The record gives the reactivity of an RNA of 177 nucleotides to DMS and 2A3.
DMS (dimethyl sulfate) methylates the pairing face of unpaired adenines and cytosines.
The RNA was probed in 150 mM KOAc, 10 mM MgCl2 and 150 mM bicine (pH 8.5) at 24 C.
2A3 is a SHAPE reagent: it acylates the 2'-hydroxyl of flexible nucleotides of all four kinds.
It was measured as part of the RMDB libraries RFM100 and RFMREP.

RNA sequence: GGGAACGACUCGAGUAGAGUCGAAAAGUGUACAGAGGGCGACACCUGCCCAGUGCUGGCACGUGAAGCUGGAGUUCAGUUCAGUGAAGCGCCAGUAAACGGCGGGGGUAACUAUAACCCUCUUAAGUCACUGACAAAUAUUCGUAUUUGUCAGUGAAAAAGAAACAACAACAACAAC
Reactivity to DMS in 0.01 (KOAc 150mM, MgCl2 10mM, bicine 150mM(pH8.5), 24C), signal-to-noise 9, nucleotides 027 to 126: g010u020g020u010a070c150a030g000a010g010g010g010c200g000a050c090a040c010c000u000g010c010c000c090a170g010u010g010c000u000g000g000c020a080c060g000u010g000a180a300g000c000u000g000g000a020g010u040u060c230a130g010u000u000c010a010g000u000g000a170a250g000c040g010c000c000a010g010u000a020a140a140c250g000g010c020g010g000g000g000g010u010a050a090c190u030a120u030a170a190c010c000c010u000c000u000u010a050a080g010
Reactivity to 2A3 in 0.01 (KOAc 150mM, MgCl2 10mM, bicine 150mM(pH8.5), 24C), signal-to-noise 9, nucleotides 027 to 126: g070u070g030u050a060c030a030g010a010g010g010g010c040g030a010c020a030c030c000u000g000c010c010c040a010g000u000g000c000u010g000g000c100a040c210g010u040g030a060a010g000c000u000g000g020a020g030u220u220c100a080g020u030u000c000a000g000u090g150a120a010g000c000g000c000c000a000g000u010a060a120a010c010g010g000c000g000g000g010g010g030u040a040a000c030u020a020u090a250a040c000c000c000u000c000u000u010a030a010g010